[RMDB]
RNA sequence: GGGAACGACUCGAGUAGAGUCGAAAAGAGGCGAAAUAAUUCCCAUCUCCUCUGUACGGCCGGAGAUGGGUUUGGCCGUACUAAUAAGCCUCAUAGUGACGAGAGUCACGAAUUCUGGAUAGCCUUUGGUAGUCGGCUAUCCUGUGACUACCGUAGAAUUAUUAUGCUGCUUCGGCAGCAUAAUAAUAAAAGAAACAACAACAACAAC
Reactivity to 2A3 in 0.01 (KOAc 150mM, MgCl2 10mM, bicine 150mM(pH8.5), 24C), signal-to-noise 1, nucleotides 027 to 156: g010a000g010g000c030g050a170a040a000u150a080a070u130u010c040c010c010a030u080c080u110c050c050u090c070u020g020u040a030c030g040g010c020c000g020g020a020g000a120u300g130g000g010u030u000u010g020g000c000c000g000u010a040c000u010a000a100u070a040a000g030c000c000u000c020a030u090a050g080u070g070a030c020g020a010g000a000g210u000c000a000c000g030a060a060u190u120c050u090g000g010a000u000a010g020c000c000u090u050u120g230g030u060a090g100u130c020g000g000c000u000a000u000c000c000u000g020u000g000a010c000u040a140c030c000g010u010a010g120a140
Reactivity to DMS in 0.01 (KOAc 150mM, MgCl2 10mM, bicine 150mM(pH8.5), 24C), signal-to-noise 1, nucleotides 027 to 156: g000a050g000g040c050g020a050a110a170u020a080a160u020u000c010c010c020a120u000c040u010c030c010u000c070u010g020u030a040c010g030g030c030c100g010g010a070g030a140u010g040g010g010u000u000u000g010g020c030c050g000u000a120c060u000a140a110u010a120a230g010c000c000u000c020a140u010a150g030u000g010a060c000g010a180g000a150g030u010c010a020c020g020a060a140u020u000c230u010g010g000a060u000a050g040c000c000u010u010u000g030g030u000a080g060u000c180g040g050c000u000a010u000c000c000u020g020u000g010a010c040u010a010c020c050g040u000a120g010a250